Chemical mapping of a 177-nucleotide RNA with DMS and 2A3. The RNA was probed in 150 mM KOAc, 10 mM MgCl2 and 150 mM bicine (pH 8.5) at 24 C. It was measured as part of the RMDB library OK2TST. For 2A3, 18,731 sequencing reads were counted. 2A3 adducts were read by reverse transcription with SuperScript II with manganese. Values cover nucleotides 27 to 126. For DMS, 35,314 sequencing reads were counted.
RNA sequence: GGGAACGACUCGAGUAGAGUCGAAAAAGAGCAAGGUAAGUCACAAUGGAACGCACCAUAAGCUGGACUAAUCUUUGCCCAGCUUCAGCCACGCUUAUACUGUUGCUUUUGCAACUGUCGGAAGCCGUAAUUUAUACCAUUUCGAUGGUAUAAAUUAAAAAGAAACAACAACAACAAC
Reactivity to DMS in 0.01 (KOAc 150mM, MgCl2 10mM, bicine 150mM(pH8.5), 24C), signal-to-noise 9, nucleotides 027 to 126: a080g010a080g010c030a070a080g010g010u000a070a070g010u000c060a070c110a100a060u000g000g000a080a110c190g010c130a080c050c040a070u010a040a040g020c030u000g000g000a030c010u000a070a100u010c150u010u010u000g000c020c000c000a030g000c020u000u000c120a080g010c040c040a060c160g010c030u010u000a080u010a060c050u000g000u000u000g000c010u000u010u010u010g020c020a020a020c020u000g010u000c110g010g010a070a060g020c020c150g010
Reactivity to 2A3 in 0.01 (KOAc 150mM, MgCl2 10mM, bicine 150mM(pH8.5), 24C), signal-to-noise 9, nucleotides 027 to 126: a000g080a010g000c020a050a020g050g010u120a070a030g030u060c030a010c030a090a060u050g030g030a190a050c090g020c080a050c030c000a020u030a110a020g010c030u050g020g000a010c010u050a060a110u120c090u110u110u080g000c000c000c000a000g000c000u050u030c040a020g030c020c010a040c040g010c020u070u040a040u030a100c030u040g030u050u010g020c000u090u150u110u300g000c020a030a020c020u030g050u060c050g070g060a040a020g020c030c010g010